[RMDB]
RNA sequence: GGGAACGACUCGAGUAGAGUCGAAAAUAAGAGGGGAUGCAAAAACAGAUAAGAAUCUGAAUAAAAGCACUAUCUGUCAAAGAAACAACAUUUGUGUAAUAAUCAAGAAACCGUUUAGAGCACCCCCUGGAAACAUUAAUUAUAACACAUGCAAAUACUAGGGGCUGACGUUCGCGUCAGCCCCUAGAAAAGAAACAACAACAACAAC
Reactivity to 2A3 in 0.01 (KOAc 150mM, MgCl2 10mM, bicine 150mM(pH8.5), 24C), signal-to-noise 2, nucleotides 027 to 089: u050a010a010g010a000g000g000g000g000a010u000g020c000a000a000a000a010a010c010a010g010a010u040a020a030g040a020a070u010c010u030g000a030a020u080a000a080a000a000g020c010a010c010u030a030u010c010u010g000u020c030a000a000a000g000a000a000a000c000a000a000c000a000
Annotation: This 207-nucleotide RNA was probed chemically with 2A3. Source: RMDB library OK3TST, as collected in RNAgym. The RNA was probed in 150 mM KOAc, 10 mM MgCl2 and 150 mM bicine (pH 8.5) at 24 C.